This 177-nucleotide RNA was probed chemically with DMS and 2A3. The 2A3 profile rests on 30,610 reads. Reactivities are rounded to 0.1 and cut off at 0 and 3. The RNA was probed in 150 mM KOAc, 10 mM MgCl2 and 150 mM bicine (pH 8.5) at 24 C. Values cover nucleotides 27 to 126. For DMS the reverse transcriptase was MarathonRT.

RNA sequence: GGGAACGACUCGAGUAGAGUCGAAAACUUCGUGUUAAUGCGGCGAUGGAUCAGGUCUAUCGCGAUCCAACCCAAAUAUCGCUACUAGGAGAGAGACAAAUCAAGAUAGCGUCGCUAUCAUAGUUAGAAGCGGUAUGUUUUUCGAGGCAUGCCGCUUAAAAGAAACAACAACAACAAC
Reactivity to DMS in 0.01 (KOAc 150mM, MgCl2 10mM, bicine 150mM(pH8.5), 24C), signal-to-noise 9, nucleotides 027 to 126: c060u010u020c080g030u010g010u010u020a070a080u020g010c120g000g000c020g000a060u010g000g010a030u010c100a120g020g010u020c070u020a060u010c050g020c060g000a030u010c070c060a090a140c080c020c020a060a090a080u040a050u010c040g010c030u000a060c070u010a070g000g000a050g000a060g010a060g010a050c090a060a090a090u030c160a100a090g000a040u010a040g010c060g010u020c100g010c010u000a020u000c020a060u020a050g000u010u010a070g010
Reactivity to 2A3 in 0.01 (KOAc 150mM, MgCl2 10mM, bicine 150mM(pH8.5), 24C), signal-to-noise 9, nucleotides 027 to 126: c010u080u060c060g050u020g050u150u150a160a050u170g080c070g040g000c050g050a040u050g010g020a010u040c050a070g020g170u030c050u090a100u090c040g010c040g050a010u000c010c030a100a280c010c010c010a010a070a040u160a030u020c030g000c040u050a050c020u050a070g090g000a020g010a010g000a000g010a040c030a050a120a070u180c060a090a040g020a070u030a010g030c060g150u090c100g020c020u010a010u020c020a040u060a060g090u080u070a070g010